RNA sequence: GGGAACGACUCGAGUAGAGUCGAAAACGCUGGGCCUAAUAGCUUAGCACCUGGGAGCUGAAGCGCGCACGGCAUCGAUCAGGUGUGGGAGCUAGGGCCUGUGCUGAAGCGCGCACGGCAACCGAAAGGUGCGAGUAGACUAGCUUCGGCUAGUCAAGCAUAAUCCUUAAUUCGUUAAGGAUUAUGCAAAAGAAACAACAACAACAAC
Reactivity to 2A3 in 0.01 (KOAc 150mM, MgCl2 10mM, bicine 150mM(pH8.5), 24C), signal-to-noise 9, nucleotides 027 to 156: c080g000c060u110g020g040g040c020c020u150a240a180u130a210g020c040u080u050a040g000c010a000c000c000u030g000g010g020a030g000c010u040g040a300a030g020c010g000c000g000c010a020c030g030g000c010a050u240c120g140a110u150c020a010g020g020u080g050u120g120g150g010a110g030c070u070a070g010g020g000c000c000u010g000u020g000c000u030g030a160a050g000c000g000c000g000c000a010c030g020g000c010a050a110c020c010g080a190a100a020g010g000u010g000c010g000a010g020u110a040g000a000c000u000a000g010c000u030u040c210g050g000c000u000a000g000u000c020a000a010
Reactivity to DMS in 0.01 (KOAc 150mM, MgCl2 10mM, bicine 150mM(pH8.5), 24C), signal-to-noise 4, nucleotides 027 to 156: c090g020c020u010g020g030g020c030c020u010a110a190u000a090g020c020u000u000a230g010c010a010c010c010u010g020g000g020a300g020c020u000g000a090a120g020c020g040c000g050c020a300c030g010g000c010a110u010c130g010a100u000c020a130g020g020u010g040u000g020g010g010a130g020c030u000a090g020g020g010c010c000u000g010u010g030c000u010g000a080a100g010c010g020c020g030c000a200c040g000g020c010a080a200c000c010g010a110a120a110g030g010u010g010c020g030a080g020u010a130g010a030c000u000a010g010c010u000u000c300g040g010c000u000a020g000u010c000a030a210
Structure probing data (2A3 and DMS) for a 207-nucleotide construct. It was measured as part of the RMDB library RNAMAK. Reactivities are given for positions 27 through 156. For DMS, 9,128 sequencing reads were counted. The RNA was probed in 150 mM KOAc, 10 mM MgCl2 and 150 mM bicine (pH 8.5) at 24 C. For DMS the reverse transcriptase was MarathonRT. For 2A3, 34,299 sequencing reads were counted.